[RMDB]
Source information:
The record gives the reactivity of an RNA of 177 nucleotides to 2A3 and DMS. The RNA was probed in 150 mM KOAc, 10 mM MgCl2 and 150 mM bicine (pH 8.5) at 24 C. The data come from the RNA Mapping Database (RMDB), libraries RFM100 and RFMREP. For 2A3 the reverse transcriptase was SuperScript II with manganese. High 2A3 reactivity points to a flexible backbone, as in loops and unpaired stretches.
RNA sequence: GGGAACGACUCGAGUAGAGUCGAAAAGAAAGAAACGCCAUAUCAGUGAUAUGGUUGUUGUGUUAGAUAUUGUUAUAAUGAUCCGGAUGAUUUUUAUGAAAAAGACAUUAUUGGCCAGUUCUUUGAACCAUCUUUUCAGAUUCGUCUGAAAAGAUGGAAAAGAAACAACAACAACAAC
Reactivity to 2A3 in 0.01 (KOAc 150mM, MgCl2 10mM, bicine 150mM(pH8.5), 24C), signal-to-noise 4, nucleotides 027 to 126: g090a000a050a000g060a030a070a000c080g000c030c000a000u020a000u020c080a090g230u060g200a010u000a000u000g000g000u030u050g000u010u000g020u020g040u060u070a040g030a170u080a060u150u080g030u050u030a030u020a080a070u030g110a140u000c050c040g040g030a040u050g040a080u110u070u080u060u200a130u210g090a110a050a010a000a000g020a000c010a000u020u010a040u100u090g040g010c050c050a020g050u020u000c000u020u010u040g020a040a040
Reactivity to DMS in 0.01 (KOAc 150mM, MgCl2 10mM, bicine 150mM(pH8.5), 24C), signal-to-noise 5, nucleotides 027 to 126: g010a100a100a090g000a030a050a030c060g010c030c010a020u000a010u000c020a200g010u030g010a020u000a010u000g010g010u000u000g010u010u000g010u000g030u000u000a100g000a110u000a080u000u020g010u020u000a040u000a020a010u010g000a050u010c010c120g030g020a210u010g010a020u010u010u020u000u020a030u060g000a070a070a080a170a100g000a050c010a010u000u000a020u010u000g010g010c100c110a120g000u000u000c000u000u000u000g000a130a100